RNA sequence: GGGAACGACUCGAGUAGAGUCGAAAACAUUGCAGCUUCGGCUGCAAUGAAUCUCUGGUCUCUACGACUCUACUCGAUAGAGGGUGGAGUAGUCGUUCCCGAUGGCGCCCCAAUUCGUUGGGGCGAACAUCAUAAACUCAUUCGUGAGUUUAUGAUGAAAAGAAACAACAACAACAAC
Reactivity to 2A3 in 0.01 (KOAc 150mM, MgCl2 10mM, bicine 150mM(pH8.5), 24C), signal-to-noise 4, nucleotides 027 to 126: c000a000u000u010g000c000a000g010c010u070u090c230g180g000c000u000g010c000a000a000u000g000a010a020u040c060u010c070u150g100g080u080c030u020c020u070a020c010g020a010c010u010c010u020a010c000u010c000g000a010u020a020g070a030g000g030g000u070g030g040a060g020u080a010g000u020c000g010u000u000c000c000c000g000a020u020g070g090c010g000c000c000c000c000a000a020u030u040c130g050u020u020g000g000g000g000c000g000a000a000
Reactivity to DMS in 0.01 (KOAc 150mM, MgCl2 10mM, bicine 150mM(pH8.5), 24C), signal-to-noise 4, nucleotides 027 to 126: c000a010u000u000g000c010a010g010c000u000u010c240g030g000c000u000g000c000a000a000u000g000a080a120u010c110u010c030u010g020g010u000c010u000c030u000a110c020g010a040c000u000c000u000a010c000u000c000g010a070u010a050g010a110g000g000g010u000g010g010a070g010u010a040g000u000c000g000u000u000c000c010c000g000a010u000g010g010c010g000c000c000c000c010a010a030u000u010c160g030u000u000g010g000g000g020c000g000a010a040

This 177-nucleotide RNA was probed chemically with 2A3 and DMS. The DMS profile rests on 8,194 reads. The 2A3 profile rests on 23,653 reads. Values cover nucleotides 27 to 126. The RNA was probed in 150 mM KOAc, 10 mM MgCl2 and 150 mM bicine (pH 8.5) at 24 C.